[RMDB]
RNA sequence: GGGAACGACUCGAGUAGAGUCGAAAAAAAAGAAACGCAUGUGGACUGAGGAAGAGUACAAAGAACUCUUAGAAAAAGGCUUUACUAAACAACAAUUGAGAGAUAUGGCUGAGGCAUUGCGUGAAGCGUGCAGAAAGUCAUUCGUGACUUUCUGCACAAAAGAAACAACAACAACAAC
Reactivity to DMS in 0.01 (KOAc 150mM, MgCl2 10mM, bicine 150mM(pH8.5), 24C), signal-to-noise 1, nucleotides 027 to 126: a040a000a100a140g040a030a100a080c090g000c050a040u010g110u000g010g010a140c050u000g000a050g030g000a020a000g000a010g010u010a070c080a070a110a100g000a040a070c030u000c000u000u000a080g020a040a040a050a090a030g000g000c070u000u000u010a030c040u000a060a070a050c120a070a090c200a040a030u000u040g000a060g000a160g000a040u020a020u000g000g000c040u060g000a090g000g010c060a090u000u000g010c050g010u000g010a030a080g020c190